Structure probing data (DMS and 2A3) for a 207-nucleotide construct. The RNA was probed in 150 mM KOAc, 10 mM MgCl2 and 150 mM bicine (pH 8.5) at 24 C. Values are in units of 0.01, from 0 to 300, in steps of 10.
RNA sequence: GGGAACGACUCGAGUAGAGUCGAAAAUACCGCAGGCCUGCGGUGCGGCAGUGUGGAUACCUGCCGUAAGCCGUGUUGUUUUGACAACCGGGAGAAAGCGUAUGCGGAGGCAGCGCUUUCAGGGUCUAAAAGUAUGGGAUCUUCGGAUCCCAUACAACAUGCAUAAUGUGUUCGCACAUUAUGCAUGAAAAGAAACAACAACAACAAC
Reactivity to DMS in 0.01 (KOAc 150mM, MgCl2 10mM, bicine 150mM(pH8.5), 24C), signal-to-noise 2, nucleotides 027 to 156: u000a170c000c010g010c090a110g020g000c030c010u000g000c050g000g010u000g010c050g000g020c000a030g010u000g030u000g030g010a290u000a050c110c000u000g000c000c000g020u000a000a040g020c020c000g000u000g020u000u000g010u000u000u000u000g020a060c000a010a020c010c010g000g010g020a130g010a000a010a010g010c000g030u000a100u010g020c000g030g030a240g030g040c000a130g010c000g000c010u000u000u000c020a070g000g020g000u000c020u010a070a070a140a150g000u000a010u000g010g010g010a000u000c020u000u000c300g040g000a010u000c010c000c000a000u010a000c010a050a110
Reactivity to 2A3 in 0.01 (KOAc 150mM, MgCl2 10mM, bicine 150mM(pH8.5), 24C), signal-to-noise 3, nucleotides 027 to 156: u110a000c000c000g000c010a010g010g040c000c020u030g000c010g000g010u000g000c000g010g000c000a000g000u060g000u130g300g120a090u190a180c010c000u000g000c000c000g000u000a020a000g020c000c020g100u140g000u130u000g020u000u140u060u300g110a010c000a000a010c000c010g020g000g000a020g000a000a000a000g000c000g000u050a300u210g000c060g010g080a060g300g000c010a000g010c010g000c000u000u020u000c000a010g000g000g020u000c010u010a070a080a000a000g000u000a000u000g000g000g000a000u010c020u030u070c220g070g000a000u000c020c000c000a000u000a000c000a000a000